[RMDB]
RNA sequence: GGGAACGACUCGAGUAGAGUCGAAAAGGUGGAAUACUUUGUAAGUUACUAUGAUUAUUAUCAACCUGAGGCAUACGUACCGUCUACUGACACUUUUAUUGAAAAAGAUGCCUCAAUCAAUGAUGAAUAGGGAAUAUGCAUUCGUGCAUAUUCCCUAAAAAGAAACAACAACAACAAC
Reactivity to 2A3 in 0.01 (KOAc 150mM, MgCl2 10mM, bicine 150mM(pH8.5), 24C), signal-to-noise 2, nucleotides 027 to 126: g040g000u080g080g020a220a070u160a170c010u040u130u270g070u030a050a000g070u040u020a030c020u030a150u110g080a100u090u000a040u040u110a160u120c000a000a150c000c060u000g000a030g000g000c000a030u090a070c080g030u030a250c120c000g080u110c020u080a260c220u190g050a050c000a000c000u060u080u230u060a130u150u160g100a040a000a000a000a000g020a000u000g010c000c000u010c010a000a010u030c000a000a090u080g070a030u100g070a030a040
Reactivity to DMS in 0.01 (KOAc 150mM, MgCl2 10mM, bicine 150mM(pH8.5), 24C), signal-to-noise 2, nucleotides 027 to 126: g000g000u020g000g010a100a050u040a020c040u010u000u020g000u020a100a050g020u000u000a090c040u000a100u010g030a010u000u060a010u000u020a060u000c040a040a130c130c150u000g000a040g000g000c000a010u000a060c190g000u050a110c260c160g000u000c030u050a060c170u000g000a060c030a130c100u000u010u050u000a110u050u040g030a020a070a060a040a000g000a000u000g000c010c010u000c000a020a020u020c100a120a030u000g000a000u010g020a090a150

Record summary
Chemical mapping of a 177-nucleotide RNA with 2A3 and DMS. For DMS the reverse transcriptase was MarathonRT. It was measured as part of the RMDB library OK1LIB. For 2A3, 714 sequencing reads were counted.